[RMDB]
RNA sequence: GGGAACGACUCGAGUAGAGUCGAAAAGUUUGAGACCAGCCUGGGCAACAUGGUGAAACCUCAUCUCUACAAAAAAUACAGAAAAAUUAGGUGGGCAUGGUGGCUUGCGCCUGUAGUCCCAGCUAAUUGGGAGGCUGAAGCGAGAGGAUCACCUACGACGUUUAACUGUAUUCGUACAGUUAAACGUAAAAGAAACAACAACAACAAC
Reactivity to 2A3 in 0.01 (KOAc 150mM, MgCl2 10mM, bicine 150mM(pH8.5), 24C), signal-to-noise 3, nucleotides 027 to 156: g060u100u160u100g060a040g030a040c030c010a010g020c000c020u050g010g000g020c100a140a040c020a160u070g000g050u020g010a050a030a060c000c010u050c030a180u060c070u070c000u060a090c100a050a180a020a040a040a000u170a080c070a060g110a010a120a020a070a030u060u030a040g200g040u020g000g000g020c070a020u050g040g020u030g000g130c080u040u120g070c040g010c010c010u040g080u140a080g030u060c000c000c000a010g030c010u020a030a020u090u030g000g010g000a020g030g040c020u050g010a020a000g020c000g030a040g000a000g060g030a040u030c010a010c000c010u040a060c050g040
Reactivity to DMS in 0.01 (KOAc 150mM, MgCl2 10mM, bicine 150mM(pH8.5), 24C), signal-to-noise 2, nucleotides 027 to 156: g020u020u010u000g000a140g030a060c020c000a090g010c000c020u010g010g010g040c060a020a040c030a050u010g050g000u030g010a060a060a020c020c020u000c040a060u010c030u000c030u000a270c050a010a050a070a040a090a130u010a230c040a120g000a030a050a110a060a050u010u010a030g020g040u000g010g010g000c070a060u040g010g000u010g030g020c040u000u000g010c110g000c010c030u000g040u000a070g030u010c000c010c000a000g020c050u000a020a070u000u000g010g000g000a050g040g030c040u000g020a060a080g010c040g010a090g000a050g010g000a190u000c010a040c020c020u000a060c020g020